[RMDB]
RNA sequence: GGGAACGACUCGAGUAGAGUCGAAAACUUAACAUUAACAUAAACUCCGCCCAAGCUGUAAGAGUAGAACCACCCAAGGCAUCGCUAGGCUUUACCAUAUAGGUUUUAUCGUCAAUUGAGUUUGCAUAAGCUGAUUUGUUUGCAUGAGCUACCAGUAGGAAUGAUAGCAAUUCGUUGCUAUCAUUCCAAAAGAAACAACAACAACAAC
Reactivity to 2A3 in 0.01 (KOAc 150mM, MgCl2 10mM, bicine 150mM(pH8.5), 24C), signal-to-noise 2, nucleotides 027 to 156: c070u160u130a080a020c020a100u080u180a020a030c010a040u180a080a150a030c030u080c030c050g050c030c010c010a040a010g000c040u080g020u160a060a020g020a000g070u050a030g040a080a020c020c020a060c010c010c000a040a030g020g010c030a020u060c030g020c010u010a020g000g010c000u070u080u040a100c020c010a050u120a020u060a260g020g000u040u020u060u090a130u100c090g050u080c040a070a080u090u080g010a030g070u010u120u070g000c000a020u050a120a050g010c020u020g090a110u050u070u100g140u020u070u130g020c030a020u100g060a010g000c020u120a080c010c040a010g130u240a050
Reactivity to DMS in 0.01 (KOAc 150mM, MgCl2 10mM, bicine 150mM(pH8.5), 24C), signal-to-noise 1, nucleotides 027 to 156: c030u010u000a100a220c090a100u020u000a090a150c010a140u000a070a110a060c030u000c020c060g020c030c020c020a070a150g010c020u010g020u010a090a090g030a150g000u000a090g000a040a070c030c000a140c070c070c030a070a130g020g000c070a010u000c050g000c070u010a070g010g010c050u000u010u000a070c030c030a150u000a090u030a130g030g000u000u000u010u000a060u010c060g020u010c050a060a140u010u010g000a130g020u010u000u010g020c060a080u010a050a090g000c050u020g010a150u000u010u010g020u000u040u000g010c030a120u020g020a130g030c030u010a170c020c070a090g020u010a070